[RMDB]
RNA sequence: GGGAACGACUCGAGUAGAGUCGAAAACCCGUCGUGUUCGCACGACGGGAACUACCGUGAAUGGAGCUCGGUAUAAAACUCCAACCCUUGGAAACAAGGGAACAAUCGCCACUUUCGAGUGGCGAAACCAUCCCCUAACUUUCGAGUUAGGGGAUGGAAAAGAAACAACAACAACAAC
Reactivity to DMS in 0.01 (KOAc 150mM, MgCl2 10mM, bicine 150mM(pH8.5), 24C), signal-to-noise 1, nucleotides 027 to 126: c000c000c000g050u000c010g090u000g010u000u020c230g040c020a000c000g000a010c010g010g000g000a050a020c010u000a020c000c000g020u000g020a070a170u000g000g000a020g000c040u000c000g010g010u010a080u000a000a020a000a020c000u000c000c010a030a300c010c000c010u000u000g000g000a170a080a190c000a020a000g000g000g000a050a080c170a110a080u000c000g040c000c000a010c000u020u000u020c180g000a020g020u000g000g020c010g000a000a050a130
Reactivity to 2A3 in 0.01 (KOAc 150mM, MgCl2 10mM, bicine 150mM(pH8.5), 24C), signal-to-noise 2, nucleotides 027 to 126: c000c000c000g000u020c000g000u020g070u010u110c220g020c110a000c000g000a000c000g010g000g010a000a020c020u030a020c000c000g020u010g040a100a210u070g020g040a030g000c020u020c060g020g040u100a130u130a300a050a040a030c010u010c010c020a070a120c020c000c000u010u000g000g010a030a050a000c000a010a000g000g000g010a000a000c010a010a090u020c000g000c010c000a010c000u040u080u170c230g040a020g000u010g000g050c010g000a010a000a000
An RNA of 177 nucleotides, treated with DMS and 2A3 and read out base by base. The 2A3 profile rests on 2,483 reads. The reactions ran in a buffer of 150 mM KOAc, 10 mM MgCl2 and 150 mM bicine (pH 8.5), at 24 C.